[RMDB]
RNA sequence: GGGAACGACUCGAGUAGAGUCGAAAAGCUCUGGAAUUGAGGCCCCUCUAACAAUAAUCCAAAACUACUUCGCAGGGUAAUCUGCCGAAUCGUAGGAUGCCCAUUACUAUCUAUUUUUGGAGCAUCUAAAACUGUCAGUGCUUCGGCACUGACAGAACAAAUAACUAGCCUUCGGGCUAGUUAUUUGAAAAGAAACAACAACAACAAC
Reactivity to 2A3 in 0.01 (KOAc 150mM, MgCl2 10mM, bicine 150mM(pH8.5), 24C), signal-to-noise 2, nucleotides 027 to 156: g010c000u000c000u000g060g060a170a090u070u030g020a040g020g020c030c000c000c000u100c030u050a130a120c080a080a190u150a050a100u050c060c040a030a070a050a120c020u030a010c010u020u010c010g030c010a010g010g050g110u140a070a080u080c000u020g030c100c020g030a010a000u110c050g010u020a020g070g000a000u000g000c000c000c000a010u030u040a050c040u090a120u210c060u110a280u140u110u010u010u020g020g000a160g010c010a000u020c010u030a000a030a020a080c000u000g000u000c000a000g030u000g000c000u080u110c180g000g000c000a010c000u000g000a000c010a000g000a000a000
Reactivity to DMS in 0.01 (KOAc 150mM, MgCl2 10mM, bicine 150mM(pH8.5), 24C), signal-to-noise 1, nucleotides 027 to 156: g040c020u000c050u000g020g020a090a150u000u000g050a060g000g000c070c030c030c000u000c110u000a190a070c030a130a180u010a050a100u000c040c050a080a020a130a100c030u000a020c030u020u000c040g080c080a030g020g000g010u000a080a120u000c040u000g030c010c070g010a020a050u000c110g000u020a140g020g020a040u010g000c000c000c020a070u000u000a050c080u020a120u000c050u000a170u010u000u000u000u010g010g020a140g030c020a040u010c020u000a020a070a050a170c000u000g010u000c000a000g030u020g020c000u000u000c300g060g010c020a000c000u020g000a010c000a000g000a040a120
Structure probing data (2A3 and DMS) for a 207-nucleotide construct. DMS adducts were read by reverse transcription with MarathonRT.